[RMDB]
RNA sequence: GGGAACGACUCGAGUAGAGUCGAAAAGGCUCUUUCGUCACCUUUACCGCUAAUGGCACCGUUGCGAAGGGUGAUGCCGGGGUUAUCAAAACUGGCUACAAACACACUGGCGAAUAUACCAAGAACGCAGAUGGCACAGUUCUGGUGAAAGUUCAGCCUCGCUUAUCGGAUUCGUCCGAUAAGCGAGAAAAGAAACAACAACAACAAC
Reactivity to 2A3 in 0.01 (KOAc 150mM, MgCl2 10mM, bicine 150mM(pH8.5), 24C), signal-to-noise 2, nucleotides 027 to 156: g010g000c000u000c000u050u050u040c050g010u010c010a020c000c000u010u060u040a130c140c030g020c120u200a080a090u080g120g000c140a080c110c100g090u120u020g000c000g020a040a010g020g000g010u010g000a000u030g000c030c040g000g010g000g000u110u100a120u200c120a040a180a030a000c060u050g040g020c020u060a050c100a020a100a000c050a000c000a000c110u020g040g030c020g080a050a000u110a000u030a060c010c080a160a060g010a010a000c030g000c050a020g060a250u130g030g080c040a010c030a090g000u010u000c000u030g050g000u050g000a090a120a030g040u030u040c030a040g000c020
An RNA of 207 nucleotides, treated with 2A3 and read out base by base. For 2A3, 832 sequencing reads were counted. For 2A3 the reverse transcriptase was SuperScript II with manganese. Values cover nucleotides 27 to 156. It was measured as part of the RMDB library OK3TST.